[RMDB]
RNA sequence: GGGAACGACUCGAGUAGAGUCGAAAAAGCCACCGCUACGGCGGUGGCACGUAGAAAAGUUGGUGCUUAGACCACGCCCUCUACCGUAAUAAUAGAUAAAUAGGCGAGUAUCAGUACGCUGAUACAAAAAACACUCACACGUUCGCGUGUGAGUGAACUACUUAAUACACUUCGGUGUAUUAAGUAGAAAAGAAACAACAACAACAAC
Reactivity to 2A3 in 0.01 (KOAc 150mM, MgCl2 10mM, bicine 150mM(pH8.5), 24C), signal-to-noise 5, nucleotides 027 to 156: a000g010c000c000a010c000c000g030c010u050a070c260g130g000c010g010g000u000g010g010c010a010c010g020u030a000g050a040a030a020a020g040u070u040g020g000u070g050c170u230u170a060g050a080c000c000a010c010g000c010c020c000u010c000u010a040c060c050g060u020a040a050u080a180a030u070a160g140a070u150a120a130a040u160a060g030g010c070g030a040g010u000a010u010c000a000g030u010a020c230g000c070u000g000a000u050a020c050a010a200a000a000a000a000c000a000c000u000c000a000c000a000c000g020u060u090c220g030c000g080u000g000u010g000a000g000u000g000a000a010
Reactivity to DMS in 0.01 (KOAc 150mM, MgCl2 10mM, bicine 150mM(pH8.5), 24C), signal-to-noise 2, nucleotides 027 to 156: a090g000c000c000a010c000c010g020c010u010a050c220g100g010c000g000g120u000g000g020c000a000c030g010u000a060g020a150a080a030a130g000u000u000g000g000u000g010c060u000u030a160g010a090c030c030a030c030g000c000c000c020u000c050u000a030c020c010g040u000a120a150u000a150a190u000a080g010a090u000a000a060a090u010a040g020g020c040g000a140g010u000a000u000c000a020g000u010a130c300g010c020u000g000a060u000a080c000a000a040a040a110a060a080c020a020c000u000c000a000c000a000c000g000u000u010c300g050c010g050u030g040u000g010a000g020u000g000a020a080